[RMDB]
RNA sequence: GGGAACGACUCGAGUAGAGUCGAAAACGCUGGGAGAAGGUUUGAUGACCCCGAGUCACUGAAGCGCGCACGGUGACGUUUGACGGCAAGAACAUUCUCCUGUGCUGAAGCGCGCACGGCAACCGAAAGGUGCGAUAGUUGCCAUUCGUGGCAACAAUCUAGCAGUGAGAUUCGUCUCACUGCUAGAAAAAGAAACAACAACAACAAC
Reactivity to DMS in 0.01 (KOAc 150mM, MgCl2 10mM, bicine 150mM(pH8.5), 24C), signal-to-noise 2, nucleotides 027 to 156: c040g030c090u000g000g020g000a040g010a050a040g000g040u000u010u000g010a230u000g010a190c110c010c030c060g010a060g000u000c000a020c000u000g000a080a080g000c010g020c040g050c030a300c010g010g010u000g020a020c010g010u000u000u010g020a220c180g030g000c080a070a140g010a040a030c040a080u000u000c020u000c000c010u000g010u000g010c000u000g000a110a060g020c120g020c030g020c010a180c000g030g000c010a110a100c040c030g010a130a080a230g020g010u000g020c020g000a150u000a110g020u000u000g010c000c010a140u030u010c210g010u000g010g020c010a040a040c020a080a120
Reactivity to 2A3 in 0.01 (KOAc 150mM, MgCl2 10mM, bicine 150mM(pH8.5), 24C), signal-to-noise 6, nucleotides 027 to 156: c020g000c020u030g010g000g000a010g010a010a010g090g040u030u060u090g300a300u160g140a260c010c010c000c030g070a070g000u000c000a000c010u020g030a180a060g010c010g000c000g000c010a020c010g010g010u000g000a010c010g020u090u140u300g140a100c050g000g000c050a150a170g020a090a000c000a020u010u000c000u000c000c000u000g020u020g000c020u040g020a120a030g000c010g000c000g000c020a010c010g010g000c010a030a020c000c000g040a090a020a010g020g000u010g000c000g010a030u120a160g010u000u010g000c000c000a010u070u080c220g080u060g000g000c000a000a000c010a000a070